The record gives the reactivity of an RNA of 207 nucleotides to DMS and 2A3. Source: RMDB library OK3TST, as collected in RNAgym. Conditions: 150 mM KOAc, 10 mM MgCl2 and 150 mM bicine (pH 8.5), 24 C.

RNA sequence: GGGAACGACUCGAGUAGAGUCGAAAACACGCUGCUGCUGAAUCGUACAGCCUUUGGCUUCACGAGUCAGAAGUUGCAGUACGUCAGCGACAGAUUCGCAGUCGAUGCGAAGUCCGACCACAAGAAGUAUCCGGGUUGGAAGCUGUGGCUGGGCUGCUCAAGUAGGGAGUUUCGACUCCCUACUUGAAAAAGAAACAACAACAACAAC
Reactivity to DMS in 0.01 (KOAc 150mM, MgCl2 10mM, bicine 150mM(pH8.5), 24C), signal-to-noise 2, nucleotides 027 to 156: c110a080c080g000c000u000g040c000u000g020c000u000g010a030a070u000c010g000u000a070c020a050g000c010c050u040u000u000g030g010c010u000u000c140a130c120g010a040g000u010c020a040g000a020a080g030u000u000g020c050a090g020u000a030c030g040u000c010a060g020c000g010a050c030a080g010a160u010u000c020g010c000a090g000u020c080g030a170u010g040c010g020a070a120g020u000c010c010g000a080c000c020a090c040a130a140g020a110a120g010u000a070u000c020c040g020g010g020u000u010g030g000a020a300g010c040u000g020u010g010g040c000u010g030g010g010c020u000g000c120
Reactivity to 2A3 in 0.01 (KOAc 150mM, MgCl2 10mM, bicine 150mM(pH8.5), 24C), signal-to-noise 4, nucleotides 027 to 156: c100a010c040g020c010u000g010c010u020g010c000u000g030a010a050u150c010g000u020a010c030a090g000c000c000u050u050u110g010g000c000u080u070c110a070c160g040a010g010u020c010a010g030a160a010g070u110u140g000c010a010g010u030a030c010g040u020c000a010g010c020g050a010c000a010g060a130u040u050c010g000c010a030g090u280c140g150a100u050g010c000g000a020a010g030u000c000c000g010a050c020c000a050c070a200a000g080a080a020g090u100a130u110c080c080g150g070g060u150u190g070g000a030a000g030c000u020g000u020g080g000c000u010g000g030g010c000u050g000c010